[RMDB]
RNA sequence: GGGAACGACUCGAGUAGAGUCGAAAAACCCCAGAAACCAUUCCUUAUACCUUGAGUAUUGCUGAAUUCAGUUUAGCGUGCAUGCCCUUGGCUAUUCUCAUAGUGAUUGUCAAAUUUGGAGUUACUUAAAACACGACACCCUUCGGGGUGUCGUGAACCAUUUUCUUUUCUUCGGAAAAGAAAAUGGAAAAGAAACAACAACAACAAC
Reactivity to 2A3 in 0.01 (KOAc 150mM, MgCl2 10mM, bicine 150mM(pH8.5), 24C), signal-to-noise 1, nucleotides 027 to 156: a000c040c010c000c000a020g120a030a150a000c060c010a080u080u080c020c030u160u120a090u080a220c020c020u080u160g080a020g040u030a040u130u120g000c010u030g010a140a220u160u030c020a050g130u020u090u070a020g000c020g010u080g000c010a020u050g010c010c000c000u050u030g050g000c000u050a060u090u040c010u020c020a060u070a060g060u020g090a100u070u130g040u120c080a060a120a170u130u010u260g030g000a030g060u100u000a020c010u070u120a010a100a090a090c020a000c000g010a020c010a000c010c020c040u090u090c190g000g000g000g020u000g000u000c000g000u000g000a010a000